[RMDB]
RNA sequence: GGGAACGACUCGAGUAGAGUCGAAAAAAGCAUGUCUCUCUAUUGUCUCUCUAUUCAGAACUUAGUAUGGUGAUGGAUCGAUAGAGAGACAUUCCUGCAUCUGUCAUCCAUCACGAUAAAAACAAAAGUACGGAUACUAAUUCGUUAGUAUCCGUACAAAAGAAACAACAACAACAAC
Reactivity to 2A3 in 0.01 (KOAc 150mM, MgCl2 10mM, bicine 150mM(pH8.5), 24C), signal-to-noise 2, nucleotides 027 to 126: a000a000g080c080a070u070g000u000c010u000c000u000c010u020a040u040u030g050u010c030u000c020u000c010u080a120u160u110c100a020g060a170a070c030u070u090a090g060u080a190u190g200g000u000g010a020u030g000g010a010u060c010g000a000u030a000g000a000g010a010g000a000c000a000u000u020c000c010u000g010c000a070u030c060u120g200u100c020a010u000c010c000a010u010c010a000c010g030a050u110a070a080a030a050a020c100a070a100a010a010
Reactivity to DMS in 0.01 (KOAc 150mM, MgCl2 10mM, bicine 150mM(pH8.5), 24C), signal-to-noise 3, nucleotides 027 to 126: a060a050g010c200a050u000g010u010c030u010c020u010c020u000a060u010u010g010u000c070u000c080u000c050u000a070u000u000c120a080g000a090a140c160u010u000a090g030u010a040u000g000g010u000g010a020u000g010g010a010u000c090g010a010u000a010g000a010g000a030g000a000c010a020u000u010c010c020u000g000c180a110u000c060u000g010u020c080a030u000c020c000a010u000c010a020c020g030a070u000a010a030a030a070a050c130a040a100a050a100
Notes
Conditions: 150 mM KOAc, 10 mM MgCl2 and 150 mM bicine (pH 8.5), 24 C. Structure probing data (2A3 and DMS) for a 177-nucleotide construct. For DMS, 2,639 sequencing reads were counted. It was measured as part of the RMDB library M2PK90.